An RNA of 177 nucleotides, treated with 2A3 and read out base by base.
[RMDB]
RNA sequence: GGGAACGACUCGAGUAGAGUCGAAAAGCGUACACCUUCGGGUGUACGCAAAGGUGGUUGUCGCUCCACCAAAAACAUAGCGAUAAAAAGUACGAAAGUACAAAAUCCUUUGGUUCGCCAAAGGAAAGACGAAACAUAUCUUCGGAUAUGUUUCGUCAAAAGAAACAACAACAACAAC
Reactivity to 2A3 in 0.01 (KOAc 150mM, MgCl2 10mM, bicine 150mM(pH8.5), 24C), signal-to-noise 1, nucleotides 027 to 126: g000c010g000u000a000c000a000c000c000u000u060c230g120g000g000u030g000u000a000c010g000c000a000a010a000g020g000u000g000g000u010u170g010u000c000g010c010u000c000c000a010c010c010a030a040a040a000a000c030a050u060a010g000c000g020a000u010a000a170a010a000a000g000u000a000c030g050a120a030a030g000u000a000c000a020a150a000a040u020c000c000u040u020u000g000g050u020u100c240g010c050c000a000a000a000g000g000a050a000a000
The reactions ran in a buffer of 150 mM KOAc, 10 mM MgCl2 and 150 mM bicine (pH 8.5), at 24 C. Source: RMDB library M2PK50, as collected in RNAgym.